[RMDB]
RNA sequence: GGGAACGACUCGAGUAGAGUCGAAAAGAGCGAUUAGACAAAGGGGUAGAGCUACAUAUUAGAUAGCUGUAUAAUCGUUCAAGUUACUUCAAAACAUCUUCAAUAUUUAUUACUUACUUUCCUUUCUGCCAGAGUACGGUAUUCGUACCGUACUCAACUCGACUACAUCUUUCGAGAUGUAGUCGAGAAAAGAAACAACAACAACAAC
Reactivity to 2A3 in 0.01 (KOAc 150mM, MgCl2 10mM, bicine 150mM(pH8.5), 24C), signal-to-noise 4, nucleotides 027 to 156: g000a000g010c010g010a000u000u010a010g010a070c080a070a160a070g040g010g020g030u070a050g050a000g100c010u040a020c020a050u290a160u180u110a120g130a280u010a030g010c000u000g000u040a030u030a010a000u000c000g000u020u000c010a000a020g030u030u070a050c030u060u090c080a020a090a110a090c020a070u060c050u200u090c070a130a090u080a220u160u200u090a090u100u100a070c040u060u050a050c010u050u060u060c020c010u020u050u050c020u030g030c050c030a040g000a000g010u000a000c000g000g010u010a020u000u030c110g030u020a000c000c000g000u000a000c010u000c000a000a000